[RMDB]
RNA sequence: GGGAACGACUCGAGUAGAGUCGAAAAGAUAUGGAGACAGCCGAGAACGAUCAACCAAUGAUGUUGAGCUCGGAAACGAGCUCAAUUGAGGUUACGUGAUCGUUCGUUUGACGCUGUCUCCUAAGUCCUAUAGGCUUCGGUUCGCCGAAGCCUAUAGAAAAGAAACAACAACAACAAC
Reactivity to DMS in 0.01 (KOAc 150mM, MgCl2 10mM, bicine 150mM(pH8.5), 24C), signal-to-noise 2, nucleotides 027 to 126: g010a130u000a250u010g010g000a040g020a020c010a000g040c000c020g030a090g030a000a040c020g000a030u000c010a050a080c010c070a140a170u000g000a140u010g020u000u000g000a040g000c000u000c000g000g010a030a110a200c010g040a000g010c000u010c000a020a000u000u000g000a230g010g020u000u000a060c300g010u000g020a000u000c010g030u000u010c000g000u000u000u010g030a140c300g010c020u010g000u000c000u060c000c000u000a000a070g000u000c010
This 177-nucleotide RNA was probed chemically with DMS. For DMS the reverse transcriptase was MarathonRT. High DMS reactivity at an A or C suggests that its Watson-Crick edge is free. The DMS profile rests on 1,081 reads. Conditions: 150 mM KOAc, 10 mM MgCl2 and 150 mM bicine (pH 8.5), 24 C.